[RMDB]
RNA sequence: GGGAACGACUCGAGUAGAGUCGAAAAAGGGUCGUGCUGGUAGCUUCCAGCCCGAAGCGCUGCAUGAUGGUGCCUAGCUUCGCUGCGUCGAUGUUGUACUUGCUGCUGAAGCGCUCGGCUCGCGCCAAUCGCCAAGCACAUUCGUGUGCUUGGCGAUAAAAGAAACAACAACAACAAC
Reactivity to 2A3 in 0.01 (KOAc 150mM, MgCl2 10mM, bicine 150mM(pH8.5), 24C), signal-to-noise 2, nucleotides 027 to 126: a010g130g010g000u000c020g000u050g060c050u030g010g120u060a070g000c090u080u020c060c000a050g020c000c010c010g030a030a010g000c040g000c020u010g030c040a090u110g020a060u130g080g080u060g000c020c020u030a010g000c000u050u060c000g080c060u050g030c010g100u090c070g010a050u100g050u060u020g040u030a060c010u070u170g020c000u030g010c030u100g030a080a010g000c010g010c010u010c000g000g000c000u000c020g040c010g000c020c000a040
Reactivity to DMS in 0.01 (KOAc 150mM, MgCl2 10mM, bicine 150mM(pH8.5), 24C), signal-to-noise 1, nucleotides 027 to 126: a040g010g000g000u000c020g100u000g020c010u000g000g020u000a090g040c130u020u030c000c010a050g010c090c100c110g030a070a100g000c030g000c020u000g030c020a020u010g000a090u000g000g010u010g030c020c020u000a090g000c030u000u000c020g020c060u000g050c050g020u000c010g000a070u020g000u000u000g010u000a090c020u000u030g020c000u010g000c040u000g010a070a090g000c000g060c060u010c080g010g000c050u000c080g000c070g020c050c070a160
The record gives the reactivity of an RNA of 177 nucleotides to 2A3 and DMS. The DMS profile rests on 2,218 reads. It was measured as part of the RMDB library OK1LIB.